[RMDB]
RNA sequence: GGGAACGACUCGAGUAGAGUCGAAAAUGUGAUUCUCAUUAGUUUGCUUUAUCGUAGAAAUUCAAUAGUAAGAGUUAAGGAAGAUAGGCAUGUAGCUUGAUUACCUACAUGUCUAUCGCCAGGGAAAUGUCUAAUCUGUCUACUUAGUAGCCUGGAACGUAUAAGCAAGUUUCGACUUGCUUAUACGAAAAGAAACAACAACAACAAC
Reactivity to 2A3 in 0.01 (KOAc 150mM, MgCl2 10mM, bicine 150mM(pH8.5), 24C), signal-to-noise 8, nucleotides 027 to 156: u130g030u060g020a100u080u010c030u010c050a060u050u090a060g110u070u080u150g060c040u100u130u140a110u200c090g060u070a070g090a090a150a090u230u110c070a060a080u060a160g060u090a110a040g030a020g070u120u110a060a030g060g020a020a100g000a010u000a000g000g000c000a000u000g000u020a010g010c030u050u110g060a080u130u150a030c000c000u000a000c000a000u000g000u000c000u000a000u000c000g000c010c000a010g010g010g040a010a100a050u150g050u020c030u070a040a110u030c030u050g110u010c000u020a040c010u060u020a040g010u020a020g080c010c000u020g000g020a050a040
Reactivity to DMS in 0.01 (KOAc 150mM, MgCl2 10mM, bicine 150mM(pH8.5), 24C), signal-to-noise 4, nucleotides 027 to 156: u010g010u010g000a090u010u000c010u000c010a150u000u000a060g020u000u000u000g010c040u000u000u000a090u010c070g020u000a100g010a080a040a090u000u000c060a060a110u000a080g030u000a050a100g010a100g020u010u000a060a130g020g020a110a080g010a030u000a000g000g020c000a010u000g030u010a010g010c040u000u000g020a270u000u000a060c160c000u000a010c000a010u010g020u010c010u000a010u000c010g010c010c000a060g010g020g020a060a050a080u000g020u000c040u000a060a090u000c050u000g020u000c030u010a080c070u010u000a100g020u000a100g020c030c020u000g010g010a100a230
Source information: The record gives the reactivity of an RNA of 207 nucleotides to 2A3 and DMS. The reactions ran in a buffer of 150 mM KOAc, 10 mM MgCl2 and 150 mM bicine (pH 8.5), at 24 C. It was measured as part of the RMDB library OK3TST. 2A3 adducts were read by reverse transcription with SuperScript II with manganese. For DMS, 12,823 sequencing reads were counted.